[RMDB]
An RNA of 207 nucleotides, treated with 2A3 and read out base by base. Reactivities are given for positions 27 through 156. The data come from the RNA Mapping Database (RMDB), library OK3TST.
RNA sequence: GGGAACGACUCGAGUAGAGUCGAAAAGGUUAGCCGACCCGAACACCACGCCGGAGGAUCUUGGCCUAUGAGUGACACCGUGGCCGCGUGCCCCGAGUGUGACGCCGGGAGUGUGCAAGUCAAUAGCCCCGGCGGCCACCACGCCGAACGCAACGCACCAUCUUAGCGAAUUCGUUCGCUAAGAUGGAAAAGAAACAACAACAACAAC
Reactivity to 2A3 in 0.01 (KOAc 150mM, MgCl2 10mM, bicine 150mM(pH8.5), 24C), signal-to-noise 1, nucleotides 027 to 156: g040g000u140u100a090g050c080c060g050a000c030c000c020g060a020a050c060a000c100c020a020c090g000c000c010g060g000a020g000g100a070u020c030u140u090g010g050c000c000u300a300u300g060a040g080u040g020a000c010a010c020c000g030u040g030g020c060c080g150c090g110u240g000c000c060c010c000g030a050g000u050g000u040g150a020c000g000c000c000g040g000g000a280g000u120g010u020g060c000a180a000g030u140c030a010a060u050a100g010c000c000c000c000g000g000c000g000g000c000c000a010c010c010a040c080g060c060c000g000a040a010c010g040c090a060a040c040g000c030a000